[RMDB]
RNA sequence: GGGAACGACUCGAGUAGAGUCGAAAAAAAAGAUAUGGAUCGUCUACCCACCUCCGAUGUCGCGAAGAACAGGGAUCGGAAACGAUCCCUGGGAGCGAUAAUCGGAGAGGACGAUCCUAAGUCAAAACCAACAGUAAGUGUUCGCACUUACUGUUGGAAAAGAAACAACAACAACAAC
Reactivity to DMS in 0.01 (KOAc 150mM, MgCl2 10mM, bicine 150mM(pH8.5), 24C), signal-to-noise 2, nucleotides 027 to 126: a120a020a120a130g000a090u000a130u000g000g030a010u010c000g000u000c000u000a200c010c000c080a300c040c000u000c000c020g000a010u000g010u000c000g030c030g020a180a090g060a100a200c040a010g010g000g020a000u000c020g030g000a080a020a090c010g000a020u010c010c000c000u000g000g000g000a050g010c000g000a030u000a020a090u000c000g000g020a040g000a010g000g000a010c010g030a000u000c000c000u000a030a020g010u030c120a130a110a080a210
Reactivity to 2A3 in 0.01 (KOAc 150mM, MgCl2 10mM, bicine 150mM(pH8.5), 24C), signal-to-noise 1, nucleotides 027 to 126: a050a000a020a010g110a070u110a030u080g000g020a020u000c000g030u010c000u070a300c030c030c050a030c020c000u000c010c000g000a000u010g000u000c020g000c040g290a300a070g010a070a030c020a000g000g000g020a000u000c000g050g000a020a030a000c020g000a020u000c010c020c000u020g000g000g000a010g010c000g000a010u080a130a130u030c000g000g020a000g000a000g000g000a000c000g010a000u000c000c000u010a000a000g050u030c130a010a040a100a240

The record gives the reactivity of an RNA of 177 nucleotides to DMS and 2A3. The RNA was probed in 150 mM KOAc, 10 mM MgCl2 and 150 mM bicine (pH 8.5) at 24 C. Reactivities are given for positions 27 through 126. Source: RMDB library TTRDES, as collected in RNAgym. For DMS the reverse transcriptase was MarathonRT.